[RMDB]
RNA sequence: GGGAACGACUCGAGUAGAGUCGAAAAGGGACAUCCGCUGCUCGGAGGAUGAGAAGCUGUGUGACCCCAACACCAGGCCUGUAGGGGAGAAGAACUGCACGGGCCCGCCCUGUGACCGGCAGUGGACUCCACGGAUAUGAUUCGUCAUAUCCGUGGAAAAAGAAACAACAACAACAAC
Reactivity to DMS in 0.01 (KOAc 150mM, MgCl2 10mM, bicine 150mM(pH8.5), 24C), signal-to-noise 4, nucleotides 027 to 126: g010g010g010a160c110a190u000c000c050g020c020u010g010c000u010c020g040g000a120g000g010a100u000g000a100g000a080a130g000c060u000g000u020g020u000g010a170c040c000c000c030a200a160c050a050c010c030a090g000g010c060c040u010g010u010a170g010g020g010g000a170g000a120a140g020a090a090c030u000g010c100a060c030g000g000g020c010c030c050g010c050c010c010u000g010u020g010a170c050c020g000g000c010a010g010u000g010g000a090c260
Reactivity to 2A3 in 0.01 (KOAc 150mM, MgCl2 10mM, bicine 150mM(pH8.5), 24C), signal-to-noise 2, nucleotides 027 to 126: g020g020g050a030c020a060u030c010c020g000c010u010g000c070u080c120g040g020a040g040g000a030u100g060a060g020a140a020g050c090u060g000u000g020u050g190a140c030c010c020c020a010a020c010a000c010c020a030g050g040c000c000u070g000u070a120g000g050g040g020a060g060a100a010g050a080a030c040u100g000c080a030c030g020g000g000c000c000c040g030c020c000c000u080g030u110g090a090c020c000g000g000c010a010g000u010g000g000a030c020